[RMDB]
RNA sequence: GGGAACGACUCGAGUAGAGUCGAAAAACGUAGCCCCCAUUGAACUCGAAAAUAAAUUCACACCUUUGAGUGUGGAGUCUACACCAGUUGAACCUCCAACUGUAGAUGUGGUAGCACUUCAACAGGAAAGCCUAGUACUUCGGUACUAGGAAAAGAAACAACAACAACAAC
Reactivity to 2A3 in 0.01 (KOAc 150mM, MgCl2 10mM, bicine 150mM(pH8.5), 24C), signal-to-noise 9, nucleotides 027 to 129: a000c050g010u040a000g040c000c000c000c000c020a060u040u100g040a050a040c040u060c170g070a030a030a040a050u250a040a060a050u130u090c030a040c010a020c060c010u110u120u170g070a070g030u020g000u010g000g020a020g050u000c020u030a000c020a020c010c000a000g000u010u040g050a070a070c030c030u060c030c000a020a010c010u020g030u050a060g020a190u050g010u010g030g050u050a030g010c000a000c000u070u080c010a020a020c010a060g050g040a080a040a010g010
Reactivity to DMS in 0.01 (KOAc 150mM, MgCl2 10mM, bicine 150mM(pH8.5), 24C), signal-to-noise 5, nucleotides 027 to 129: a080c080g060u030a110g070c000c010c000c000c010a180u040u000g030a080a060c140u000c060g030a050a060a060a050u030a000a060a100u060u030c060a000c000a030c040c030u050u050u050g000a120g000u000g000u000g050g000a060g000u000c020u040a000c020a080c050c030a040g000u000u020g000a090a170c110c050u040c040c010a000a000c020u040g000u000a050g020a090u020g030u030g000g030u000a100g000c010a010c040u000u000c000a000a000c000a010g010g020a030a030a050g000